[RMDB]
RNA sequence: GGGAACGACUCGAGUAGAGUCGAAAAACAUACUCGUGGUACGCCACGAGUAUGAGCCUGCUCCCUGAGACCUCAAGUGUGAGCGCACUGUUGAUGCUUCACGCCUGGGCUCUCUGGGUACCAGGAAAGCCGUAUGUAGCUUCGGCUACAUACGGCUAAAAGAAACAACAACAACAAC
Reactivity to 2A3 in 0.01 (KOAc 150mM, MgCl2 10mM, bicine 150mM(pH8.5), 24C), signal-to-noise 2, nucleotides 027 to 126: a000c000a000u000a010c010u000c010g010u000g020g040u070a070c270g040c040c000a010c030g000a000g010u000a000u000g000a000g000c000c000u000g000c000u010c000c000c000u010g010a010g010a000c000c030u050c020a000a000g000u000g000u000g010a030g020c060g110c080a040c070u150g160u300u230g100a270u080g020c000u040u030c010a000c000g010c000c000u030g000g010g000c020u020c000u000c010u030g000g000g010u010a030c010c000a020g010g000a050a070
The record gives the reactivity of an RNA of 177 nucleotides to 2A3. 2A3 adducts were read by reverse transcription with SuperScript II with manganese. The RNA was probed in 150 mM KOAc, 10 mM MgCl2 and 150 mM bicine (pH 8.5) at 24 C. For 2A3, 1,672 sequencing reads were counted.